Overview: Structure probing data (DMS and 2A3) for a 207-nucleotide construct. The RNA was probed in 150 mM KOAc, 10 mM MgCl2 and 150 mM bicine (pH 8.5) at 24 C.
RNA sequence: GGGAACGACUCGAGUAGAGUCGAAAACGUUUGGGUCCUGCGCAACGGGACCCCGUGAACCUUGUCAGGUCCGGAAGGAAGCAGCAAUAAGCGGGUCUUCUCGUGUGCCGCAGGAGUGCCUGAACCGAGCAAACCGACAGAGCUUCGGCUCUGUCGGGAUUGUUUGUUGGUUCGCCAACAAACAAUCAAAAGAAACAACAACAACAAC
Reactivity to DMS in 0.01 (KOAc 150mM, MgCl2 10mM, bicine 150mM(pH8.5), 24C), signal-to-noise 2, nucleotides 027 to 156: c090g020u000u000u020g020g020g020u000c010c000u000g030c060g030c070a090a020c020g020g020g000a030c260c010c000c010g000u010g010a190a150c120c200u000u000g050u000c080a300g000g000u000c010c010g070g050a170a250g020g020a090a010g020c000a250g000c000a060a080u010a130a300g010c020g000g070g020u000c130u000u000c000u010c000g030u000g020u010g040c080c000g000c020a080g000g020a300g010u000g020c000c000u020g020a040a010c000c030g000a160g020c080a050a060a200c000c010g010a040c010a000g010a050g020c020u000u010c300g050g010c010u000c010u010g000u000c000g000g000
Reactivity to 2A3 in 0.01 (KOAc 150mM, MgCl2 10mM, bicine 150mM(pH8.5), 24C), signal-to-noise 3, nucleotides 027 to 156: c030g000u000u000u020g030g000g060u300c000c000u000g000c010g010c020a020a000c000g000g000g000a010c020c000c000c010g000u030g010a040a060c030c010u030u010g060u060c000a010g040g000u020c000c000g050g130a090a070g030g000a010a000g020c010a000g000c010a010a040u060a100a010g000c020g000g010g020u030c080u110u010c010u030c000g040u220g110u050g100c140c050g010c000a000g010g010a010g000u170g020c000c000u000g000a010a010c020c030g020a050g060c090a100a030a040c000c000g000a000c010a000g010a000g010c010u070u100c270g060g000c000u030c000u000g000u000c000g000g010